[RMDB]
Notes
This 177-nucleotide RNA was probed chemically with DMS and 2A3. Conditions: 150 mM KOAc, 10 mM MgCl2 and 150 mM bicine (pH 8.5), 24 C. For DMS, 13,201 sequencing reads were counted. Reactivities are rounded to 0.1 and cut off at 0 and 3. Values cover nucleotides 27 to 126.
RNA sequence: GGGAACGACUCGAGUAGAGUCGAAAAGCUCGGUGACACCGCGUCUGCCUGGGUCCGAAAGAUUUCUUGUCGCAAAUCUACAAGACAUUGGUUAACGUGUGGGCCGCUUGAGCGGCCGCUCGGCGGGACAUCCUAUCCGCUUCGGUGGGUGGGAUGUAAAAGAAACAACAACAACAAC
Reactivity to DMS in 0.01 (KOAc 150mM, MgCl2 10mM, bicine 150mM(pH8.5), 24C), signal-to-noise 5, nucleotides 027 to 126: g010c020u000c020g010g000u010g000a120c100a110c040c030g010c030g000u010c070u000g000c010c020u020g020g000g010u000c010c020g000a120a130a060g000a030u010u000u000c030u020u020g020u010c180g010c190a030a040a040u010c020u010a040c220a120a070g000a020c040a070u020u000g010g010u000u010a100a140c050g010u000g010u020g010g010g000c020c010g020c010u010u040g010a100g020c010g010g000c020c020g000c020u010c050g000g010c010g000g000g000
Reactivity to 2A3 in 0.01 (KOAc 150mM, MgCl2 10mM, bicine 150mM(pH8.5), 24C), signal-to-noise 4, nucleotides 027 to 126: g010c000u000c020g000g030u050g030a020c010a010c030c010g010c010g020u000c030u030g030c000c000u020g030g000g010u000c000c010g030a070a040a000g010a010u010u010u010c010u030u110g110u060c040g010c080a010a020a060u030c010u010a010c020a040a000g020a000c010a020u010u050g030g010u050u110a030a010c010g010u020g000u100g040g040g000c000c000g000c010u120u200g040a020g010c000g000g000c000c000g000c010u010c010g020g000c000g000g000g010